The data come from the RNA Mapping Database (RMDB), library OK2TST.
Structure probing data (DMS and 2A3) for a 177-nucleotide construct.
For 2A3 the reverse transcriptase was SuperScript II with manganese.
Conditions: 150 mM KOAc, 10 mM MgCl2 and 150 mM bicine (pH 8.5), 24 C.
RNA sequence: GGGAACGACUCGAGUAGAGUCGAAAAUCUUGCCGCACGGAUUGGCGCAAUCGAACACGGCAUAAUGUUCUUCCUUCAGGAAAGGCGCGCCUUCCAGCGUCAUCGCGCCGCAAACAUGGAUAUUGGACUACCCUCCACCAUUCGUGGUGGAGGGUAGAAAAGAAACAACAACAACAAC
Reactivity to DMS in 0.01 (KOAc 150mM, MgCl2 10mM, bicine 150mM(pH8.5), 24C), signal-to-noise 2, nucleotides 027 to 126: u000c050u000u000g030c010c030g000c100a180c110g040g000a080u000u000g020g000c030g070c050a070a030u000c130g060a080a170c170a060c060g000g010c040a010u050a100a070u000g000u000u000c150u000u000c010c010u000u010c130a140g010g010a060a070a040g000g010c150g010c000g000c060c040u010u000c050c060a090g000c000g010u010c060a120u020c070g000c010g000c020c040g000c150a070a080a080c070a060u000g000g000a100u010a090u000u000g000g010a270
Reactivity to 2A3 in 0.01 (KOAc 150mM, MgCl2 10mM, bicine 150mM(pH8.5), 24C), signal-to-noise 2, nucleotides 027 to 126: u020c000u000u040g000c020c010g080c070a030c140g110g000a100u040u070g010g000c000g060c050a030a050u090c040g030a080a000c020a000c050g060g010c130a070u090a130a040u150g040u180u000c000u050u010c000c010u010u170c080a040g000g120a110a050a000g000g000c020g000c000g020c000c020u030u060c030c010a010g020c020g050u030c020a080u070c040g000c020g000c010c000g030c030a070a130a020c070a080u090g060g100a090u070a110u160u180g070g010a010